[RMDB]
RNA sequence: GGGAACGACUCGAGUAGAGUCGAAAAGCCAAUUCGCGAAGGAUAGACACAGUUUGCUGGUCGUCCUUCGCCGCCCGAAGGCACGCGGCCGCGUAUUCCAGGCGAUGAUACCGCUUCAUGUAGCAAGCGUAUCAGCAUAAUUCGUUAUGCUGAUACGAAAAGAAACAACAACAACAAC
Reactivity to 2A3 in 0.01 (KOAc 150mM, MgCl2 10mM, bicine 150mM(pH8.5), 24C), signal-to-noise 9, nucleotides 027 to 126: g040c020c000a020a120u220u170c080g000c010g000a000a000g000g010a020u130a200g030a180c280a020c040a300g090u190u260u300g200c040u020g010g000u000c000g010u000c000c000u000u000c000g000c010c010g010c000c010c000g100a100a080g050g020c040a010c040g020c010g040g040c050c030g000c020g020u060a090u120u050c040c020a030g030g020c020g010a030u090g020a020u080a090c020c030g010c040u060u100c090a140u170g040u130a030g050c070a080a020g050
Reactivity to DMS in 0.01 (KOAc 150mM, MgCl2 10mM, bicine 150mM(pH8.5), 24C), signal-to-noise 9, nucleotides 027 to 126: g010c020c030a110a140u010u000c160g010c000g010a020a010g000g000a010u000a070g030a010c010a150c030a040g010u010u010u010g020c030u000g010g000u000c010g000u000c000c000u000u000c000g020c010c180g000c020c020c040g000a120a100g000g010c160a070c090g010c050g000g010c060c060g010c030g010u010a080u000u010c080c060a110g000g000c020g010a080u000g000a090u010a100c080c040g010c030u000u010c100a070u010g000u010a060g010c110a080a080g000

Description: This 177-nucleotide RNA was probed chemically with 2A3 and DMS. Values cover nucleotides 27 to 126. DMS adducts were read by reverse transcription with MarathonRT. For 2A3 the reverse transcriptase was SuperScript II with manganese. The RNA was probed in 150 mM KOAc, 10 mM MgCl2 and 150 mM bicine (pH 8.5) at 24 C.